[RMDB]
The record gives the reactivity of an RNA of 207 nucleotides to DMS and 2A3.

RNA sequence: GGGAACGACUCGAGUAGAGUCGAAAAAAUGCCGCCUCAGUUCCAAGCUCUUUCGUGGCACUGUAAACAGUCCUAUUGAGUUAGGGGCAGUCAACCACGUUGGGAAGCUAAAUUAUCUGGUCGAGAGUUACGAUUCCCUACUUCGGUAGGGAAUCAAACUUACACUUGUCUUCGGACAAGUGUAAGUAAAAGAAACAACAACAACAAC
Reactivity to DMS in 0.01 (KOAc 150mM, MgCl2 10mM, bicine 150mM(pH8.5), 24C), signal-to-noise 2, nucleotides 027 to 156: a080a080u010g000c000c010g030c010c010u000c040a040g010u010u000c010c060a120a300g020c020u000c000u000u000u000c010g030u000g000g030c070a080c030u000g040u000a010a110a050c020a180g010u020c000c020u000a070u000u000g050a300g030u000u000a040g000g000g000g020c030a030g030u000c050a080a060c000c010a010c050g020u010u010g020g010g010a080a120g040c030u010a050a020a060u000u010a110u000c040u000g030g010u000c000g010a070g000a140g020u000u010a100c120g000a050u010u000c000c000c010u010a000c000u000u000c270g040g020u020a010g000g000g000a000a010u000c000a000a040
Reactivity to 2A3 in 0.01 (KOAc 150mM, MgCl2 10mM, bicine 150mM(pH8.5), 24C), signal-to-noise 2, nucleotides 027 to 156: a000a020u070g030c020c000g030c010c000u040c040a030g000u080u070c020c010a010a060g020c000u030c000u040u010u030c040g020u060g000g020c060a010c030u000g010u070a090a150a120c040a090g090u090c010c000u030a060u010u170g060a170g290u050u070a020g030g000g010g010c010a000g030u050c020a030a040c040c010a030c040g040u110u020g010g020g050a120a000g010c030u070a130a180a000u220u230a140u130c110u050g000g020u060c040g020a000g000a010g140u040u080a110c100g000a000u000u020c000c000c000u010a010c000u030u050c120g020g000u010a000g000g000g030a000a000u000c000a000a000

2A3 adducts were read by reverse transcription with SuperScript II with manganese. DMS adducts were read by reverse transcription with MarathonRT. The RNA was probed in 150 mM KOAc, 10 mM MgCl2 and 150 mM bicine (pH 8.5) at 24 C.